[RMDB]
RNA sequence: GGGAACGACUCGAGUAGAGUCGAAAAUAAGUCUAGUUCGCUAGACUUACUAUCGGGAAAACAGCCUCCCGGCUCGAUCAGGCGGAUUCCGUCCAAGCGGUGCAACACACGUAUUCGUACGUGUGAAGAGACAAUAAAUUUUCGAAUUUAUUGUCUCAAAAGAAACAACAACAACAAC
Reactivity to 2A3 in 0.01 (KOAc 150mM, MgCl2 10mM, bicine 150mM(pH8.5), 24C), signal-to-noise 8, nucleotides 027 to 126: u040a010a000g010u000c000u000a000g010u020u050c160g020c100u000a000g010a000c000u000u000a020c000u040a030u130c020g000g000g030a020a070a030a110c040a040g030c010c010u010c010c010c000g030g020c020u010c010g040a060u070c050a040g010g000c020g030g030a090u190u050c020c010g020u030c080c030a110a040g040c010g030g040u070g050c030a130a070c000a010c000a000c010g000u010a020u030u090c230g030u030a010c000g000u000g000u000g010a000a010
Reactivity to DMS in 0.01 (KOAc 150mM, MgCl2 10mM, bicine 150mM(pH8.5), 24C), signal-to-noise 8, nucleotides 027 to 126: u000a010a000g010u000c000u000a000g010u000u010c220g020c000u000a000g010a020c000u000u000a010c080u000a100u010c030g010g000g000a070a050a090a110c130a110g010c040c030u000c010c010c020g010g010c020u010c030g010a070u010c150a100g010g010c040g000g000a170u000u000c030c020g010u000c060c110a090a130g010c050g000g010u000g010c100a100a210c000a010c000a000c010g010u000a010u000u010c170g020u000a000c000g010u000g010u000g000a060a110
Overview:
The record gives the reactivity of an RNA of 177 nucleotides to 2A3 and DMS. As a SHAPE reagent, 2A3 marks flexible, mostly unpaired nucleotides at the ribose 2'-OH. The RNA was probed in 150 mM KOAc, 10 mM MgCl2 and 150 mM bicine (pH 8.5) at 24 C. Source: RMDB library M2PK50, as collected in RNAgym. Values cover nucleotides 27 to 126. The DMS profile rests on 12,838 reads.